Conditions: 150 mM KOAc, 10 mM MgCl2 and 150 mM bicine (pH 8.5), 24 C. An RNA of 177 nucleotides, treated with 2A3 and DMS and read out base by base. The DMS profile rests on 2,422 reads. For 2A3 the reverse transcriptase was SuperScript II with manganese. For 2A3, 3,602 sequencing reads were counted. For DMS the reverse transcriptase was MarathonRT.
[RMDB]
RNA sequence: GGGAACGACUCGAGUAGAGUCGAAAAGACAUCGACGGAUGAGGACCUGCUGUCGUUGGACCACUAUGCGCGCAAGACCUUCCACAAGACGGCCUCGCUCAUGGCCAACAGCAGCAAGGCCGUUGCCAGUUACGAGCACAUUCGUGUGCUCGUAACUAAAAGAAACAACAACAACAAC
Reactivity to 2A3 in 0.01 (KOAc 150mM, MgCl2 10mM, bicine 150mM(pH8.5), 24C), signal-to-noise 2, nucleotides 027 to 126: g060a000c010a080u070c060g110a110c090g160g000a060u110g070a160g070g070a080c000c010u000g010c000u000g010u050c020g020u060u010g080g080a260c000c030a060c100u160a040u090g020c030g010c020g000c050a040a050g020a080c030c000u030u020c030c010a120c030a080a020g020a020c030g000g000c000c010u000c010g000c010u010c010a030u050g000g000c000c020a020a020c020a030g010c010a000g010c010a030a030g010g000c030c010g010u010u030g030c030c020
Reactivity to DMS in 0.01 (KOAc 150mM, MgCl2 10mM, bicine 150mM(pH8.5), 24C), signal-to-noise 4, nucleotides 027 to 126: g010a130c050a040u000c030g030a130c210g020g020a070u010g000a090g030g010a100c030c030u000g000c010u000g030u000c030g020u000u000g010g000a130c030c060a300c140u010a080u000g010c110g010c100g010c240a110a100g010a030c020c020u010u000c010c060a100c300a080a210g000a020c040g010g000c000c020u000c020g010c000u010c090a100u000g000g000c040c060a010a010c070a060g000c060a020g010c010a040a020g010g020c010c010g000u000u000g000c100c090